Annotation
Chemical mapping of a 177-nucleotide RNA with 2A3. The 2A3 profile rests on 309 reads. 2A3 adducts were read by reverse transcription with SuperScript II with manganese. The reactions ran in a buffer of 150 mM KOAc, 10 mM MgCl2 and 150 mM bicine (pH 8.5), at 24 C.

[RMDB]
RNA sequence: GGGAACGACUCGAGUAGAGUCGAAAAAUGGUGCUUGGUAAACUUGAUUUAAAUAGGUGAAUUCAUGAAUUUGCUGUAUCUUGUGGAUUUCGACCACAGACUUUAAAUGUAAUCUCUACGGUUGAAAGAUGCGAGUCAUGUUCGCAUGACUCGCAUCAAAAGAAACAACAACAACAAC
Reactivity to 2A3 in 0.01 (KOAc 150mM, MgCl2 10mM, bicine 150mM(pH8.5), 24C), signal-to-noise 1, nucleotides 027 to 126: a000u250g000g000u030g000c020u020u150g070g010u210a000a000a030c030u000u010g020a000u020u190u160a110a040a000u140a000g000g190u030g190a000a050u000u000c000a000u240g230a100a000u090u000u000g000c010u000g020u090a120u000c000u000u260g020u210g040g040a050u110u230u230c030g020a000c000c000a020c000a000g020a030c000u180u280u130a000a090a080u120g100u050a000a240u000c000u000c000u000a020c010g050g040u040u000g000a020a020a000